This 177-nucleotide RNA was probed chemically with 2A3. For 2A3, 474 sequencing reads were counted.

RNA sequence: GGGAACGACUCGAGUAGAGUCGAAAAUGUAUCUGUUCACUACUUUGAUUUAACAUAUGACGCGUCAUAUUCCUCAUUUCAGAUUGAGGAUUACAAACACUUUUUGCGUUUCUGCUUGGAUGGCAGACUACUGCGCCCUGUUCGCAGGGCGCAGUAGAAAAGAAACAACAACAACAAC
Reactivity to 2A3 in 0.01 (KOAc 150mM, MgCl2 10mM, bicine 150mM(pH8.5), 24C), signal-to-noise 2, nucleotides 027 to 126: u100g050u050a100u000c040u090g160u000u130c160a120c300u080a130c040u270u060u050g210a290u180u070u190a190a040c000a140u160a080u070g070a000c000g020c010g060u160c010a000u010a100u200u080c000c000u050c000a070u030u300u200c100a050g020a300u110u090g000a010g000g010a010u010u060a060c060a070a220a000c000a060c100u070u030u040u120u200g010c000g000u000u000u000c000u000g020c050u010u090g170g090a000u060g000g000c000a000g000a000